[RMDB]
RNA sequence: GGGAACGACUCGAGUAGAGUCGAAAAGAUAUGGAGGGAGCUCUGGGAGAGGCAAUAUAUCGGAAACGAUAUAUGCCUUCAGAGCGAAGAACUCCUAAGUCAAAAGAAUAGAGUUCGCUCUAUUCAACCUUUGAUUACUCUUCGGAGUAAUCAAAGGAAAAGAAACAACAACAACAAC
Reactivity to DMS in 0.01 (KOAc 150mM, MgCl2 10mM, bicine 150mM(pH8.5), 24C), signal-to-noise 1, nucleotides 027 to 126: g000a050u000a300u000g000g000a010g010g050g000a120g020c000u000c000u030g000g040g010a230g030a030g000g030c000a070a010u010a000u000a000u000c000g010g000a090a050a120c000g010a000u000a000u000a000u010g000c000c010u000u000c020a010g010a020g010c000g000a050a060g000a050a260c000u000c010c000u000a010a090g010u000c020a050a040a180a170g000a010a010u000a000g020a040g010u000u000c300g020c010u020c000u000a010u000u000c000a080a110
Reactivity to 2A3 in 0.01 (KOAc 150mM, MgCl2 10mM, bicine 150mM(pH8.5), 24C), signal-to-noise 1, nucleotides 027 to 126: g040a030u030a000u160g010g010a050g000g000g010a030g000c010u030c000u030g060g100g060a300g030a010g040g000c020a170a110u020a010u000a000u030c010g020g040a000a080a020c000g030a010u010a010u000a010u010g010c070c000u050u200c000a000g000a000g000c030g020a030a050g010a030a010c000u000c010c000u010a150a030g040u000c050a020a020a000a200g010a020a020u010a030g000a000g000u080u170c260g100c150u040c020u030a060u000u020c020a010a070

Conditions: 150 mM KOAc, 10 mM MgCl2 and 150 mM bicine (pH 8.5), 24 C.
The record gives the reactivity of an RNA of 177 nucleotides to DMS and 2A3.
Values cover nucleotides 27 to 126.